[RMDB]
RNA sequence: GGGAACGACUCGAGUAGAGUCGAAAAGAGUAACCAACAAUGUGAUCUUGCUUUCGGAGGCAAGACUUGCACAGUAUCAAAUCUGCAAGUAGUGCUAUUGUUGGAAAGAAUACUGUGAAGUCAACAAAUACUCACUGGAUUUCGAUCCAGUGAGUAUAAAAGAAACAACAACAACAAC
Reactivity to 2A3 in 0.01 (KOAc 150mM, MgCl2 10mM, bicine 150mM(pH8.5), 24C), signal-to-noise 5, nucleotides 027 to 126: g090a010g040u090a050a060c010c010a000a000c010a030a030u080g020u060g170a080u040c000u020u020g010c000u060u090u270c280g300g300a060g080g000c020a030a020g000a010c010u000u020g000c010a050c020a060g020u060a040u280c050a000a070a120u040c020u040g010c030a010a020g020u060a010g070u070g160c020u060a040u020u010g000u010u040g000g000a010a020a000g050a030a060u100a050c030u010g020u030g120a070a000g040u050c030a010a000c020a040a230
Reactivity to DMS in 0.01 (KOAc 150mM, MgCl2 10mM, bicine 150mM(pH8.5), 24C), signal-to-noise 4, nucleotides 027 to 126: g020a080g010u010a080a130c010c000a000a030c020a050a010u000g010u010g000a130u020c010u000u000g000c010u010u010u040c180g010g020a120g000g000c010a020a000g010a040c010u000u000g000c000a030c190a060g030u030a250u060c230a060a100a120u020c240u000g000c000a000a000g000u000a080g020u040g030c030u000a020u000u000g010u000u000g010g000a080a120a070g010a090a110u030a030c040u010g010u010g020a070a090g020u020c050a060a090c200a070a060